An RNA of 207 nucleotides, treated with 2A3 and read out base by base. Reactivities are given for positions 27 through 156.
[RMDB]
RNA sequence: GGGAACGACUCGAGUAGAGUCGAAAAUUAGCUGGCGUUUUAGGACUAGCAGUUUUAAGGUUAUUCAGCAUGAUGAAUGGCAAAUUUUUCUAAGCGACGGUAGAGCGCAUUGCGAGAAAUAUCUAAUAAUUUUGCCGCCUCUAUUACCUGACCGCCAUACCAGAACUGUGUUCGCACAGUUCUGGUAAAAAGAAACAACAACAACAAC
Reactivity to 2A3 in 0.01 (KOAc 150mM, MgCl2 10mM, bicine 150mM(pH8.5), 24C), signal-to-noise 1, nucleotides 027 to 156: u090u080a070g060c110u080g030g000c020g080u030u060u080u200a030g040g010a070c000u010a010g040c050a050g060u040u150u130u180a050a000g030g000u010u040a040u010u050c010a000g000c060a090u090g060a080u010g020a090a000u010g000g000c010a050a060a060u170u140u070u020u000c030u100a180a020g000c040g170a050c010g050g060u040a000g010a000g040c050g000c060a030u140u210g030c080g000a030g050a040a090a010u150a080u110c080u100a000a140u070a230a110u300u080u050u030g020c020c000g000c000c000u110c010u070a120u090u030a000c000c000u000g040a120c000c040g040c000c130a130
About this RNA:
2A3 adducts were read by reverse transcription with SuperScript II with manganese.